[RMDB]
RNA sequence: GGGAACGACUCGAGUAGAGUCGAAAACCACUCCAAGUUGAGAGUUGGGCCAUGGGAUUUGGGCGAAGGCUCACGUCUCCUGGUCCCUAUAACGGAGGGAACCGCAUGAGGCUGGUUUCACAGAGCAGUGAACACUUUCUUCUCUCGACAGUGGAGGCCGAAAAGUAGUGUUCGCACUACUUUUCGGAAAAGAAACAACAACAACAAC
Reactivity to 2A3 in 0.01 (KOAc 150mM, MgCl2 10mM, bicine 150mM(pH8.5), 24C), signal-to-noise 2, nucleotides 027 to 156: c020c000a010c020u030c010c000a050a000g010u010u000g020a030g000a030g040u150u030g010g000g000c030c010a020u020g010g000g030a010u020u010u010g010g020g000c050g080a150a040g260g010c010u010c010a010c010g020u000c000u010c010c000u010g010g060u150c000c000c000u170a160u040a100a040c070g070g020a040g060g010g030a000a040c010c000g030c110a160u200g070a050g060g130c100u070g070g000u000u040u090c040a050c000a040g200a060g080c090a030g050u020g090a090a020c010a020c080u080u070u000c000u020u020c000u010c010u000c000g020a000c010a040g050u020g010g000a000g000g000
Structure probing data (2A3) for a 207-nucleotide construct. For 2A3, 1,154 sequencing reads were counted. 2A3 adducts were read by reverse transcription with SuperScript II with manganese. The data come from the RNA Mapping Database (RMDB), library ARCHII. The RNA was probed in 150 mM KOAc, 10 mM MgCl2 and 150 mM bicine (pH 8.5) at 24 C.